[RMDB]
RNA sequence: GGGAACGACUCGAGUAGAGUCGAAAACGUCAACGGUUUUGAUAGAAGUCAGAAUUUCGGAGGCCGUCUGAUCGGCGGUAGCGCCAGCCUCGAUCCCAUCCAGCUUUGAGCCAUCCGCAGCAACAUUACGGCCAUCAACCGUGCCAGUGACUGUAACCCAUGCAAUAAUGUUCGCAUUAUUGCAUGGAAAAGAAACAACAACAACAAC
Reactivity to DMS in 0.01 (KOAc 150mM, MgCl2 10mM, bicine 150mM(pH8.5), 24C), signal-to-noise 3, nucleotides 027 to 156: c050g010u010c050a090a100c050g000g030u000u000u000u000g020a100u000a090g030a110a150g020u000c040a100g000a090a130u000u000u010c030g040g020a150g020g020c020c020g030u000c060u000g000a070u010c050g010g020c020g050g040u000a060g000c020g020c010c200a080g020c040c000u000c020g030a120u010c020c040c020a080u000c040c040a130g000c030u000u000u000g000a070g010c020c040a080u000c020c000g000c030a070g010c040a070a090c060a110u000u000a050c010g000g000c010c010a090u000c050a030a070c020c030g000u000g010c050c030a120g020u000g000a050c000u000g000u000a070a110c120
Reactivity to 2A3 in 0.01 (KOAc 150mM, MgCl2 10mM, bicine 150mM(pH8.5), 24C), signal-to-noise 7, nucleotides 027 to 156: c050g050u040c050a050a040c030g020g050u030u050u090u150g100a080u090a130g090a110a020g050u100c090a030g080a190a180u060u120u140c080g060g010a060g030g000c020c010g010u020c080u070g090a130u130c050g020g000c020g000g010u070a090g030c040g000c080c010a010g000c010c010u050c050g020a070u050c030c030c020a030u040c030c020a020g030c040u130u090u160g030a020g010c000c020a030u050c030c020g020c040a120g070c020a030a070c000a040u070u150a030c030g000g010c000c010a070u060c010a010a050c010c020g020u020g030c040c030a070g040u040g070a060c040u050g040u120a030a040c000